[RMDB]
RNA sequence: GGGAACGACUCGAGUAGAGUCGAAAAGCCAUUUUUUUCGAGCACUUUUUAUUAAAACGGUGUUUUGGAAAUGCAAGCAUUGAACAGACGUGGGAAUAAAAGAGUUCAACAGUAAAAUAUAGUAUUACGAGGAUAAUUUAUUCGUAAAUUAUCCUCGAAAAGAAACAACAACAACAAC
Reactivity to DMS in 0.01 (KOAc 150mM, MgCl2 10mM, bicine 150mM(pH8.5), 24C), signal-to-noise 1, nucleotides 027 to 126: g000c010c060a040u000u010u000u000u010u000u020c060g000a040g020c010a010c000u000u020u010u000u000a040u000u010a070a050a060a020c100g040g000u010g020u000u010u000u030g040g020a030a010a030u010g000c150a060a150g010c020a080u000u000g000a040a020c000a100g000a070c060g030u000g000g000g010a040a030u000a060a040a070a100g000a150g020u010u010c010a050a070c170a110g000u000a060a050a030a080u010a080u010a060g000u010a050u000u000a160
Reactivity to 2A3 in 0.01 (KOAc 150mM, MgCl2 10mM, bicine 150mM(pH8.5), 24C), signal-to-noise 2, nucleotides 027 to 126: g040c000c000a050u210u050u040u010u000u000u060c010g000a010g000c020a010c000u130u090u030u120u190a190u100u180a080a070a050a040c020g000g000u010g020u040u100u060u080g030g020a040a010a000u030g010c080a090a040g010c000a030u140u190g010a010a020c030a030g260a190c030g040u060g020g030g060a060a000u130a070a110a000a000g110a000g050u050u030c030a070a040c030a070g040u150a020a040a150a120u240a020u040a070g050u070a030u220u210a080

Chemical mapping of a 177-nucleotide RNA with DMS and 2A3.
The RNA was probed in 150 mM KOAc, 10 mM MgCl2 and 150 mM bicine (pH 8.5) at 24 C.